An RNA of 177 nucleotides, treated with 2A3 and DMS and read out base by base. DMS adducts were read by reverse transcription with MarathonRT. For 2A3 the reverse transcriptase was SuperScript II with manganese.
RNA sequence: GGGAACGACUCGAGUAGAGUCGAAAAACUUUUAGCGAUUAUCGUUAUAGAAAUGUCCUAGGCAUAUCGCUAUGCACAGAGGUAUUAGUAGCGCAAUAGCUAUUGAAGGACAUUACCUCUCAAAUAACUAGGAGAGGAUGUUCGCAUCCUCUCCUAGAAAAGAAACAACAACAACAAC
Reactivity to 2A3 in 0.01 (KOAc 150mM, MgCl2 10mM, bicine 150mM(pH8.5), 24C), signal-to-noise 2, nucleotides 027 to 126: a020c040u120u120u070u090a010g010c000g020a040u160u040a030u280c040g030u040u080a130u070a250g140a060a120a080u130g020u020c000c000u070a070g030g000c030a050u000a010u080c010g020c020u040a030u050g040c110a090c020a100g050a010g090g020u030a030u060u110a030g040u000a010g010c000g000c100a120a200u130a090g000c000u030a030u010u090g020a110a020g050g040a010c010a000u020u030a010c000c000u000c000u010c010a090a130a110u110a130a090
Reactivity to DMS in 0.01 (KOAc 150mM, MgCl2 10mM, bicine 150mM(pH8.5), 24C), signal-to-noise 2, nucleotides 027 to 126: a060c050u010u010u010u000a010g020c000g010a040u010u010a060u000c070g040u000u000a110u010a170g000a010a070a070u010g000u000c020c010u000a080g010g000c050a040u010a010u000c010g010c060u000a010u010g020c080a180c260a030g010a010g010g010u000a030u000u000a050g030u000a010g050c010g010c140a080a060u020a100g020c000u000a040u000u010g000a040a150g000g010a070c100a010u000u000a030c020c010u000c000u010c190a060a050a090u010a020a140
The reactions ran in a buffer of 150 mM KOAc, 10 mM MgCl2 and 150 mM bicine (pH 8.5), at 24 C.